Conditions: 150 mM KOAc, 10 mM MgCl2 and 150 mM bicine (pH 8.5), 24 C. Chemical mapping of a 177-nucleotide RNA with DMS and 2A3. For DMS, 2,401 sequencing reads were counted. The data come from the RNA Mapping Database (RMDB), library OK2TST. High 2A3 reactivity points to a flexible backbone, as in loops and unpaired stretches. Values cover nucleotides 27 to 126.
RNA sequence: GGGAACGACUCGAGUAGAGUCGAAAAGCAAUUGGCUGAUGUUAAUGGGCGGGCGAUGUUACAACUGCCGAUGAUCAGCGUAUUGGCACUGAUCAUCAGUGUGGCCAGUGUCAUUAUGCAGGCGGCACGCUCAGUGACCAUUCGUGGUCACUGAGCGAAAAGAAACAACAACAACAAC
Reactivity to DMS in 0.01 (KOAc 150mM, MgCl2 10mM, bicine 150mM(pH8.5), 24C), signal-to-noise 2, nucleotides 027 to 126: g010c040a060a080u010u000g020g000c050u000g010a090u000g000u000u010a100a070u020g000g010g010c030g030g010g010c080g000a040u010g010u020u010a070c130a130a140c120u000g010c010c020g010a090u010g000a110u000c060a110g000c020g060u000a010u000u000g010g000c000a010c000u000g000a010u010c000a000u010c180a130g020u010g030u010g000g000c130c000a020g020u000g000u010c040a040u000u010a020u000g020c000a120g000g000c020g010g020c070a130
Reactivity to 2A3 in 0.01 (KOAc 150mM, MgCl2 10mM, bicine 150mM(pH8.5), 24C), signal-to-noise 2, nucleotides 027 to 126: g050c020a000a090u080u040g160g000c020u050g020a070u100g020u140u100a070a030u050g010g010g060c020g000g000g000c020g060a050u040g020u160u080a060c030a190a010c060u050g020c020c000g000a030u040g030a030u120c070a020g000c010g020u040a060u060u080g020g000c010a010c010u000g000a000u030c000a020u050c130a160g180u130g030u040g300g010c030c000a010g000u000g000u030c010a000u010u020a030u040g050c040a010g060g010c000g000g010c020a010